RNA sequence: GGGAACGACUCGAGUAGAGUCGAAAAGAUAUGGACGUGUCUCCCGACCUCCUUGAAGUCGGAAACGAUGGAGAGGUGGGAGAGCACGUCCUAAGUCAAAACCAUGUUGGCUUCGGCCAACAUGGAACCAAUGGCGUUGGUUCGCCAACGCCAUUGGAAAAGAAACAACAACAACAAC
Reactivity to 2A3 in 0.01 (KOAc 150mM, MgCl2 10mM, bicine 150mM(pH8.5), 24C), signal-to-noise 2, nucleotides 027 to 126: g020a040u050a040u180g000g000a000c010g000u010g010u040c000u010c030c020c010g300a150c010c020u020c000c020u060u080g050a080a020g000u000c000g020g000a080a110a020c040g010a010u050g000g050a090g020a000g040g000u040g010g010g000a000g000a020g010c030a000c000g010u010c000c000u000a010a010g020u000c010a000a030a070a090c010c000a000u000g020u000u000g000g000c000u090u040c300g170g010c010c010a000a000c000a000u000g010g000a000a020
Reactivity to DMS in 0.01 (KOAc 150mM, MgCl2 10mM, bicine 150mM(pH8.5), 24C), signal-to-noise 2, nucleotides 027 to 126: g010a110u000a300u010g000g010a000c000g030u000g000u000c010u000c010c000c000g000a050c000c040u010c000c300u000u010g010a210a180g000u010c000g000g030a130a100a160c010g000a010u000g000g010a150g010a010g000g000u010g000g000g000a020g010a080g010c010a000c000g000u000c000c000u000a000a090g000u000c020a040a090a150a180c000c000a000u000g010u000u000g010g010c000u000u020c220g030g000c000c000a000a000c010a010u000g000g000a020a100
The record gives the reactivity of an RNA of 177 nucleotides to 2A3 and DMS. The 2A3 profile rests on 5,072 reads. For 2A3 the reverse transcriptase was SuperScript II with manganese. The RNA was probed in 150 mM KOAc, 10 mM MgCl2 and 150 mM bicine (pH 8.5) at 24 C. It was measured as part of the RMDB library TTRDEL.